[RMDB]
RNA sequence: GGGAACGACUCGAGUAGAGUCGAAAAUUUUGUCUGCCGGUUGCUUUGUAGAUGAUAUCGUUAAGACUGACGGUACACUCAUGGUAGAGCGGUUUGUGUCUUUGGCUAUAGAUGCUUACCCUCUCACGCGGAUACUUGUUCGCAAGUAUCAAAAGAAACAACAACAACAAC
Reactivity to DMS in 0.01 (KOAc 150mM, MgCl2 10mM, bicine 150mM(pH8.5), 24C), signal-to-noise 9, nucleotides 027 to 129: u040u020u040u030g000u020c060u010g010c050c050g020g060u000u000g010c050u000u010u000g010u020a060g010a110u000g030a110u020a030u020c020g000u000u000a040a130g030a120c230u030g000a000c020g020g010u020a020c040a050c060u010c020a050u000g000g030u030a040g010a020g000c300g030g000u000u000u000g010u000g030u010c000u010u000u020g040g020c190u020a030u030a060g020a020u030g010c020u000u000a040c010c010c010u000c000u030c060a100c120g000c110g000
Reactivity to 2A3 in 0.01 (KOAc 150mM, MgCl2 10mM, bicine 150mM(pH8.5), 24C), signal-to-noise 9, nucleotides 027 to 129: u060u060u050u130g070u010c040u040g040c020c010g080g000u060u060g020c050u070u040u110g070u120a040g010a170u040g040a100u020a030u050c040g030u060u060a110a060g140a180c130u090g020a000c030g000g000u000a010c030a020c020u070c030a040u080g080g000u100a020g010a010g040c110g020g000u010u010u010g010u000g020u000c000u050u080u080g100g000c040u050a040u060a210g020a010u030g010c000u000u000a020c000c010c000u010c000u020c010a030c010g100c040g060
Structure probing data (DMS and 2A3) for a 170-nucleotide construct. For 2A3 the reverse transcriptase was SuperScript II with manganese.